Source: RMDB libraries RFM100 and RFMREP, as collected in RNAgym.
An RNA of 177 nucleotides, treated with 2A3 and DMS and read out base by base.
The RNA was probed in 150 mM KOAc, 10 mM MgCl2 and 150 mM bicine (pH 8.5) at 24 C.

RNA sequence: GGGAACGACUCGAGUAGAGUCGAAAAGGGCACGACCCGAAACCCGGUGAUCUACGCGUGGGCAAGGUGAAGCAUGGCGAAAGCCAUGUGGAGGCCUGUUAGGGUUGGUGUCUUUCAACACCCUCCCGGUUAACUCCAUGUUCGCAUGGAGUUAACCAAAAGAAACAACAACAACAAC
Reactivity to 2A3 in 0.01 (KOAc 150mM, MgCl2 10mM, bicine 150mM(pH8.5), 24C), signal-to-noise 5, nucleotides 027 to 126: g000g010g000c000a010c040g040a040c010c000c000g000a040a030a030c000c010c000g020g010u060g020a250u150c080u260a110c070g060c060g110u260g030g000g000c060a100a010g010g000u080g060a010a000g000c000a000u000g000g000c010g070a090a030a010g010c000c000a000u010g000u010g000g000a010g080g180c010c010u010g010u030u090a040g020g000g030u010u060g130g020u010g010u020c000u000u010u040c010a020a010c010a080c020c000c000u040c020c020c010
Reactivity to DMS in 0.01 (KOAc 150mM, MgCl2 10mM, bicine 150mM(pH8.5), 24C), signal-to-noise 5, nucleotides 027 to 126: g000g020g030c000a010c020g000a030c000c000c000g000a060a140a270c010c010c000g000g020u000g020a180u030c180u050a120c060g010c020g000u040g020g000g010c120a050a010g000g010u000g000a300a230g000c000a010u000g000g000c000g000a100a090a180g010c000c000a010u000g000u000g000g000a280g020g000c000c000u000g000u010u000a290g010g000g010u000u000g010g030u010g010u000c000u000u030u010c080a070a110c290a120c020c030c040u020c030c030c040
DMS adducts were read by reverse transcription with MarathonRT. Reactivities are given for positions 27 through 126.